Record summary
Chemical mapping of a 177-nucleotide RNA with 2A3 and DMS. Reactivities are rounded to 0.1 and cut off at 0 and 3. The 2A3 profile rests on 1,291 reads. The reactions ran in a buffer of 150 mM KOAc, 10 mM MgCl2 and 150 mM bicine (pH 8.5), at 24 C.
RNA sequence: GGGAACGACUCGAGUAGAGUCGAAAAAUGAACGAAGAGGGCCUGUAGGUCGCACUCAUCGCGCGGCUAGCCUGUGAGGCCAGCCCUCGGGCCGCCACCCAACACGGCUCGUGCGCUGUCUCGGCCGAGGCGCUACAUAGUUCGCUAUGUAGCGCCUAAAAGAAACAACAACAACAAC
Reactivity to 2A3 in 0.01 (KOAc 150mM, MgCl2 10mM, bicine 150mM(pH8.5), 24C), signal-to-noise 3, nucleotides 027 to 126: a000u130g000a060a010c110g010a160a060g080a030g160g040g000c020c030u070g130u210a150g000g020u030c010g000c080a060c040u090c070a140u110c040g000c010g000c000g100g010c000u010a020g060c020c000u190g130u150g090a110g000g030c010c000a010g000c030c000c000u010c000g000g010g000c010c010g010c000c030a070c040c060c010a030a090c070a020c030g060g000c020u030c040g000u020g010c050g040c030u070g030u020c030u020c050g040g000c040c010g010
Reactivity to DMS in 0.01 (KOAc 150mM, MgCl2 10mM, bicine 150mM(pH8.5), 24C), signal-to-noise 2, nucleotides 027 to 126: a090u100g010a100a090c100g000a120a110g000a080g030g040g000c030c090u080g020u020a190g010g030u000c050g040c030a010c030u010c050a040u060c170g010c110g000c040g000g000c040u060a180g000c040c030u050g000u000g000a080g020g000c000c000a080g010c000c010c000u040c020g050g000g000c000c050g070c080c090a140c050c050c010a080a100c240a140c000g010g070c010u000c070g000u000g010c240g010c000u010g040u000c040u020c040g010g000c090c000g000